Source: RMDB library TTRINS, as collected in RNAgym. This 177-nucleotide RNA was probed chemically with DMS.
[RMDB]
RNA sequence: GGGAACGACUCGAGUAGAGUCGAAAAGAUAUGGAUUGUCCCAGCUUUUGACGAAAUUAAGUCCGAGCUGUUUCGGAAACGAAACUGCUCGGACUUAAUUUCGAUAAGCUGUCACAAUCCUAAGUCAGUAUGUUACAAUCUUCGGAUUGUAACAUACAAAAGAAACAACAACAACAAC
Reactivity to DMS in 0.01 (KOAc 150mM, MgCl2 10mM, bicine 150mM(pH8.5), 24C), signal-to-noise 2, nucleotides 027 to 126: g000a060u010a300u010g020g000a000u010u000g010u000c090c070c000a010g030c000u000u000u000u010g000a250c170g010a000a000a010u000u000a000a000g010u000c000c000g000a000g030c000u000g010u000u000u010c010g040g000a130a070a230c000g030a010a000a010c020u000g000c000u020c000g010g030a000c020u000u000a010a000u000u000u000c000g020a060u020a000a020g010c000u010g000u010c120a030c010a000a010u000c000c000u010a030a120g010u010c030a130